[RMDB]
RNA sequence: GGGAACGACUCGAGUAGAGUCGAAAAUCGUACACGGAUCGCGCGAGUACCGAGCGAUCCAGUACGCUGGCCGGCCGCGCCGAGGCCGCGGCGCAGGCGCGUACAGCGCUGAUCCGGCCUGUGCGCGGGUUCGGAUGACGUUCGCGUCAUCCGAACCAAAAGAAACAACAACAACAAC
Reactivity to DMS in 0.01 (KOAc 150mM, MgCl2 10mM, bicine 150mM(pH8.5), 24C), signal-to-noise 2, nucleotides 027 to 126: u000c000g020u000a000c010a180c160g060g010a030u000c010g010c000g000c020g010a300g000u030a180c200c030g020a030g000c000g000a010u000c000c000a040g020u000a000c000g020c200u000g010g050c020c010g000g020c120c050g000c000g000c000c020g000a120g000g010c050c020g010c040g010g000c060g020c160a220g000g010c030g010c020g000u020a080c180a200g020c060g000c010u000g000a160u020c060c030g000g020c010c000u000g000u000g010c030g000c030g010
Reactivity to 2A3 in 0.01 (KOAc 150mM, MgCl2 10mM, bicine 150mM(pH8.5), 24C), signal-to-noise 1, nucleotides 027 to 126: u060c000g010u010a010c150a040c180g020g000a000u000c000g000c000g020c020g060a060g130u140a250c180c020g030a010g010c000g000a010u000c000c000a000g000u000a000c040g000c080u050g030g050c000c000g050g010c000c030g030c010g070c010c050g020a080g010g080c050c040g020c050g000g000c090g030c050a080g080g120c010g000c000g050u040a090c030a120g000c000g040c070u060g040a210u000c030c000g000g010c000c000u020g010u060g050c080g000c010g020